An RNA of 177 nucleotides, treated with DMS and 2A3 and read out base by base. As a SHAPE reagent, 2A3 marks flexible, mostly unpaired nucleotides at the ribose 2'-OH. For DMS the reverse transcriptase was MarathonRT. Conditions: 150 mM KOAc, 10 mM MgCl2 and 150 mM bicine (pH 8.5), 24 C.

[RMDB]
RNA sequence: GGGAACGACUCGAGUAGAGUCGAAAAUCAUAGCGUUUAAAUAGCUUUUUCCAGUAUUCAGGGUCUGUAUUAAUUUCCAUUUCGCGACCACGUUCAAUAAUACGAUCAAUGACCUCAUCAUAGUUACAUUGCCUAAAAGCUUCGGCUUUUAGGCAAUAAAAGAAACAACAACAACAAC
Reactivity to DMS in 0.01 (KOAc 150mM, MgCl2 10mM, bicine 150mM(pH8.5), 24C), signal-to-noise 2, nucleotides 027 to 126: u050c150a050u010a060g020c060g000u010u060u020a020a070a090u120a110g040c020u030u000u000u000u030c080c000a080g000u040a010u010u080c070a080g000g000g030u010c000u020g020u040a020u010u030a070a070u000u010u000c000c000a070u040u020u010c070g000c050g000a110c010c030a050c120g000u000u000c050a050a010u000a000a050u020a040c030g000a060u010c090a050a060u010g000a040c080c000u010c000a040u030c110a110u000a070g020u010u020a160c120
Reactivity to 2A3 in 0.01 (KOAc 150mM, MgCl2 10mM, bicine 150mM(pH8.5), 24C), signal-to-noise 2, nucleotides 027 to 126: u220c130a010u190a080g050c000g050u040u070u170a170a220a200u180a000g050c010u070u010u020u150u100c020c000a130g080u050a070u140u120c180a100g000g000g090u060c030u090g110u000a060u070u030a020a110u100u010u100c060c030a030u060u000u020c100g050c030g010a030c050c050a060c010g000u010u000c000a040a020u090a040a030u060a020c080g020a030u030c000a000a040u140g050a000c000c020u090c000a170u010c020a000u000a170g010u000u000a110c110